Chemical mapping of a 207-nucleotide RNA with 2A3. The data come from the RNA Mapping Database (RMDB), library OK3TST. The 2A3 profile rests on 729 reads.

[RMDB]
RNA sequence: GGGAACGACUCGAGUAGAGUCGAAAAUGGUAAAAAUGAAGGGCUUGGAGAAGCCAGGGGAGAGGGUACUUCCUUGGUACCUGGAGAUACUGUCACUAUGGGGAGCAUGCAAGGUUCAUCUUUAGCAGAGGUUAUUUGGCAUACUUGGCUCCCCAGGCGUAGGGAGAUACUUCGGUAUCUCCCUACGAAAAGAAACAACAACAACAAC
Reactivity to 2A3 in 0.01 (KOAc 150mM, MgCl2 10mM, bicine 150mM(pH8.5), 24C), signal-to-noise 1, nucleotides 027 to 156: u030g040g000u000a000a050a070a000a060u140g030a050a020g060g010g000c050u070u100g010g040a070g030a100a010g050c040c030a030g020g000g010g000a040g000a020g050g020g020u070a110c000u040u080c030c010u010u030g060g000u040a090c000c020u050g040g000a040g000a020u110a130c110u090g030u190c060a010c090u160a100u110g040g000g000g000a000g000c030a000u100g040c030a030a020g030g020u020u060c020a040u020c100u030u230u070a010g010c050a000g010a020g030g020u070u040a050u020u040u050g070g000c000a000u050a080c030u070u050g050g010c000u000c000c000c010c000a010g000g000